[RMDB]
The record gives the reactivity of an RNA of 177 nucleotides to DMS and 2A3. Reactivities are rounded to 0.1 and cut off at 0 and 3. The DMS profile rests on 1,423 reads. For DMS the reverse transcriptase was MarathonRT.
RNA sequence: GGGAACGACUCGAGUAGAGUCGAAAAGAUAUGGACUGCCGUCAGACAUGUCGCUCGGAAACGAGACGACAACAGCUGACGCAGUCCUAAGUCAAAAUCAAUCUGUCAGUUCGCUGACAGAUUGAAACAGGAAAUGUAGCUUCGGCUACAUUUCCUGAAAAGAAACAACAACAACAAC
Reactivity to DMS in 0.01 (KOAc 150mM, MgCl2 10mM, bicine 150mM(pH8.5), 24C), signal-to-noise 2, nucleotides 027 to 126: g020a030u000a300u040g000g000a030c000u000g000c140c160g030u010c000a000g010a110c080a170u010g000u000c000g010c000u000c010g000g020a030a090a210c000g000a030g010a130c000g010a020c000a060a030c250a110g000c020u000g000a010c020g000c000a020g020u020c000c000u010a000a030g000u000c030a060a060a100a130u000c010a020a010u000c000u020g010u000c000a000g020u000u010c210g010c000u010g000a020c010a000g000a000u000u000g000a000a050a160
Reactivity to 2A3 in 0.01 (KOAc 150mM, MgCl2 10mM, bicine 150mM(pH8.5), 24C), signal-to-noise 1, nucleotides 027 to 126: g010a000u040a040u080g000g000a000c010u020g150c170c080g020u000c010a030g060a300c030a100u040g000u000c000g000c000u000c000g000g060a030a050a030c010g020a020g110a300c010g070a010c000a000a000c070a020g050c010u010g010a000c000g010c020a000g000u000c000c000u000a010a000g000u000c000a000a000a000a300u000c000a000a000u000c010u010g030u030c000a010g000u000u210c210g010c180u000g000a000c000a000g010a000u010u000g000a000a000a000